Chemical mapping of a 177-nucleotide RNA with 2A3 and DMS.

[RMDB]
RNA sequence: GGGAACGACUCGAGUAGAGUCGAAAAGAUGCUUGGAGUGUUCGUACCUGGCGCAAGCCAGGGCAAGUGAGGCGCAAGCCUCGCUGACGGCGUGGAAAGGGCUCUCUCUGAGGCCCGAGUACGCUGAGCUAAACAAAUAGUUCGCUAUUUGUUUAGCAAAAGAAACAACAACAACAAC
Reactivity to 2A3 in 0.01 (KOAc 150mM, MgCl2 10mM, bicine 150mM(pH8.5), 24C), signal-to-noise 4, nucleotides 027 to 126: g050a020u130g020c060u060u140g110g000a080g030u070g040u070u090c080g050u090a160c000c000u000g010g000c010g000c050a070a020g000c000c000a000g000g000g000c000a010a000g000u010g010a000g000g000c000g000c050a030a030g000c010c000u000c010g000c010u010g020a020c050g020g030c030g000u030g030g010a090a050a050g010g000g010c030u040c000u000c010u010c120u300g020a020g010g010c000c000c000g000a010g000u010a000c010g000c010u030g020a020
Reactivity to DMS in 0.01 (KOAc 150mM, MgCl2 10mM, bicine 150mM(pH8.5), 24C), signal-to-noise 8, nucleotides 027 to 126: g010a080u000g010c050u000u000g010g010a090g010u010g000u000u000c040g010u000a130c000c000u000g010g010c010g020c300a080a150g010c000c000a010g000g000g000c120a060a020g030u000g010a010g010g020c000g020c270a070a160g010c010c000u000c010g010c000u000g010a180c070g000g010c060g010u000g000g010a080a150a200g000g000g010c010u010c010u000c010u000c210u010g010a030g010g010c010c000c000g000a060g010u010a070c040g020c010u000g010a200

The 2A3 profile rests on 10,825 reads. It was measured as part of the RMDB library RFMREP. Conditions: 150 mM KOAc, 10 mM MgCl2 and 150 mM bicine (pH 8.5), 24 C. For DMS the reverse transcriptase was MarathonRT.